[RMDB]
RNA sequence: GGGAACGACUCGAGUAGAGUCGAAAAAGACAAGAAGAGAGGAGGAUCAGCAGAUCAACAGGUGGUAGAUGAUGGUUUCCUUGUGUGCAGUGGGCCACUGGAUUUGGCAACAAUGAGGUUAUUGGUGUGGGAGGAAUUAUCUUAAUGAAUGAUAAUCCAAUCGGUUGUUUUUCGAAACAACCGAUUGAAAAGAAACAACAACAACAAC
Reactivity to 2A3 in 0.01 (KOAc 150mM, MgCl2 10mM, bicine 150mM(pH8.5), 24C), signal-to-noise 2, nucleotides 027 to 156: a000g030a020c010a020a010g030a060a030g030a000g000a010g070g040a060g010g010a020u010c010a000g040c030a010g000a190u080c070a050a080c000a040g010g040u020g040g040u060a010g010a060u130g010a050u060g000g010u020u050u090c010c010u070u070g030u010g020u010g100c010a040g090u050g020g010g050c020c020a040c030u020g010g100a060u050u120u070g050g020c030a050a000c050a100a130u140g010a050g000g060u050u050a040u080u130g020g010u000g010u050g030g000g020a020g000g060a020a010u070u060a010u050c040u030u140a160a110u130g120a070a100u100g040a010u190a010a110u210c170